[RMDB]
RNA sequence: GGGAACGACUCGAGUAGAGUCGAAAAUGGCCCAACCCCUUGUGGGAGGGAGCUGUCGAAGGUGGGACUGGCGAUUGGGACGAAGUCGUAACAAGGUAGCCGUACCGGAAGGUGCGGCUGGAUCACCUCUUUUGUUUAACUUCGGUUAAACAAAAGAAAAAGAAACAACAACAACAAC
Reactivity to 2A3 in 0.01 (KOAc 150mM, MgCl2 10mM, bicine 150mM(pH8.5), 24C), signal-to-noise 4, nucleotides 027 to 126: u040g090g000c010c020c000a030a050c030c010c020c020u080u240g050u260g070g020g000a040g040g010g000a070g030c030u050g020u120c050g070a090a030g060g030u100g010g020g050a080c040u040g040g010c030g050a060u030u120g060g010g010a020c040g040a060a010g030u050c020g000u050a080a040c030a090a010g080g010u040a010g040c000c000g010u010a000c000c000g000g110a080a040g010g000u010g000c000g000g000c000u000g000g010a020u040c020a040c010c010
Reactivity to DMS in 0.01 (KOAc 150mM, MgCl2 10mM, bicine 150mM(pH8.5), 24C), signal-to-noise 7, nucleotides 027 to 126: u010g020g010c010c000c010a090a190c050c010c010c030u000u000g030u000g010g000g010a170g000g010g000a100g010c050u010g020u010c070g020a100a060g010g020u000g000g010g010a080c080u010g000g010c060g010a110u000u000g000g010g000a090c070g000a090a060g010u000c030g020u000a080a090c120a070a060g010g000u000a050g010c000c000g010u000a010c000c000g020g040a110a100g010g010u000g010c020g000g000c000u000g000g000a180u010c110a080c070c060